[RMDB]
RNA sequence: GGGAACGACUCGAGUAGAGUCGAAAAGAAUUACAAGCAUUUUAGUGCAGUGAUUAAGAUGUUACCUAAAAUUAUUGAACAACUCAGAGAAAACGGAAAACAAAUUGAUGUUGUAGUGAUUGAAACAAUCCAAAAGCUACGUGAUAUCACUAUGGAACACGCCUAAUAGCUUCGGCUAUUAGGCGUGAAAAGAAACAACAACAACAAC
Reactivity to 2A3 in 0.01 (KOAc 150mM, MgCl2 10mM, bicine 150mM(pH8.5), 24C), signal-to-noise 1, nucleotides 027 to 156: g020a040a050u160u030a020c060a060a170g000c040a070u170u140u000u120a170g050u100g070c060a010g070u050g000a050u050u070a120a000g000a110u020g040u040u020a040c010c000u070a040a000a040a000u140u120a020u050u110g070a010a000c000a040a120c090u010c060a000g040a000g010a110a100a000a000c090g020g020a020a020a030a020c040a100a070a000u130u090g050a120u140g000u040u000g000u020a000g020u000g080a000u010u010g050a030a110a050c040a000a070u240c100c050a020a100a000a000g030c020u120a020c070g030u040g000a000u100a000u140c100a000c010u000a080u020g050g000a140a020
Structure probing data (2A3) for a 207-nucleotide construct.